[RMDB]
This 177-nucleotide RNA was probed chemically with 2A3 and DMS.
For 2A3 the reverse transcriptase was SuperScript II with manganese.
DMS adducts were read by reverse transcription with MarathonRT.
Reactivities are given for positions 27 through 126.
Source: RMDB library OK1LIB, as collected in RNAgym.
RNA sequence: GGGAACGACUCGAGUAGAGUCGAAAAGCACGCCGUAAAGGACACGUGCGAACACUUGAGCGGCAGAACCUGGGCUCUUGUGGAUUAGGACGUUCUACGGGAGCAACCGCACGUAGUUCGUCCGAAAGGCAUCCUUCUGGUUCGCCAGGAGGAUGCCAAAAGAAACAACAACAACAAC
Reactivity to 2A3 in 0.01 (KOAc 150mM, MgCl2 10mM, bicine 150mM(pH8.5), 24C), signal-to-noise 5, nucleotides 027 to 126: g020c000a000c030g030c010c010g090u160a140a140a090g020g020a050c050a030c180g020u030g010c020g010a080a010c020a000c000u000u020g010a000g010c010g280g000c090a020g070a120a110c020c050u070g030g060g000c000u000c000u000u020g010u010g010g030a040u040u120a030g000g000a000c000g000u000u000c000u000a010c000g070g020g090a210g030c030a060a130c060c130g020c020a030c010g010u010a000g010u010u000c000g010u000c000c010g000a010a000a000
Reactivity to DMS in 0.01 (KOAc 150mM, MgCl2 10mM, bicine 150mM(pH8.5), 24C), signal-to-noise 3, nucleotides 027 to 126: g020c060a010c000g000c030c010g000u000a080a120a250g000g000a150c130a260c070g000u010g000c030g030a210a100c020a000c020u000u010g000a030g030c040g000g010c060a070g000a070a130c170c010u030g000g010g010c010u010c000u010u000g000u000g000g000a140u010u000a110g000g000a000c020g010u000u000c000u000a000c000g020g000g010a110g000c030a070a210c290c260g000c020a020c000g010u000a000g020u000u020c000g000u030c010c000g000a000a100a090